[RMDB]
RNA sequence: GGGAACGACUCGAGUAGAGUCGAAAAGGGGUCUACUGUCACCCGAAUCGUUGAAACAAAUUGUCAGCUGAAGCCUCCACGGCUUGGAUUUAUUUGUGGAGAUUCGACAAGUCAGUAGACGGAGGCACCCAAACUGGGGGGGUUCGCCCCCCCAGAACGUAUAUGUGGUGUUCGCACCACAUAUACGAAAAGAAACAACAACAACAAC
Reactivity to 2A3 in 0.01 (KOAc 150mM, MgCl2 10mM, bicine 150mM(pH8.5), 24C), signal-to-noise 3, nucleotides 027 to 156: g070g000g020g000u010c010u000a000c000u020g070u090c030a050c040c090c020g010a010a010u010c010g070u110u140g110a160a150a020c020a010a020a010u030u060g050u100c020a030g000c030u090g040a070a020g030c000c000u070c080c040a070c050g020g040c030u060u190g040g000a020u090u270u130a050u020u050u090g040u040g040g050a060g000a020u000u000c000g020a020c080a190a200g010u020c000a000g000u000a000g000a000c000g000g000a010g000g040c020a010c000c030c000a040a030a020c000u000g010g000g000g000g000g000g020u010u020c030g050c000c000c000c020c010c000c000a000g000a050a010
Reactivity to DMS in 0.01 (KOAc 150mM, MgCl2 10mM, bicine 150mM(pH8.5), 24C), signal-to-noise 1, nucleotides 027 to 156: g000g020g060g040u000c000u010a070c040u000g000u000c050a120c130c030c020g040a040a000u000c000g010u000u000g020a260a130a050c020a030a030a050u000u000g010u000c050a070g000c000u000g020a060a130g020c000c000u010c010c090a300c070g050g000c040u000u000g000g000a080u010u030u000a040u000u000u000g030u000g000g000a220g000a040u000u000c000g020a040c030a070a130g000u000c010a050g010u000a020g000a020c000g050g030a060g000g040c040a150c020c030c000a100a100a080c040u000g010g000g010g010g080g060g010u000u010c050g020c020c000c000c010c060c040c000a000g010a050a220